[RMDB]
RNA sequence: GGGAACGACUCGAGUAGAGUCGAAAAUUGGCGCAGGCAUCGUCCGCCUCCAGCUGACCCGAGUUAAUGUAGGCGUACCCCAGGGCCCGGAGAACGCGAAUACAGAACAGAUGCGCCAGACGCAGGGCCGGCUUCGAGGGCGCGGCGGACGGCAGCGGUUUUACCGUGUAUUCGUACACGGUAAAACAAAAGAAACAACAACAACAAC
Reactivity to 2A3 in 0.01 (KOAc 150mM, MgCl2 10mM, bicine 150mM(pH8.5), 24C), signal-to-noise 1, nucleotides 027 to 156: u060u050g020g000c020g020c060a070g090g050c040a060u070c020g000u020c010c000g000c010c000u020c010c020a020g030c020u070g020a060c020c000c010g000a050g050u030u180a200a090u250g030u130a030g050g010c040g020u040a130c010c000c010c050a010g020g000g070c070c020c020g090g010a060g090a170a070c040g010c040g100a070a030u140a120c060a090g100a110a000c050a130g070a130u040g040c000g000c000c000a030g020a030c040g040c080a090g000g000g000c020c000g000g000c010u160u100c140g000a140g010g040g020c080g000c040g070g000c000g000g000a000c010g010g000c000a000g020c010g050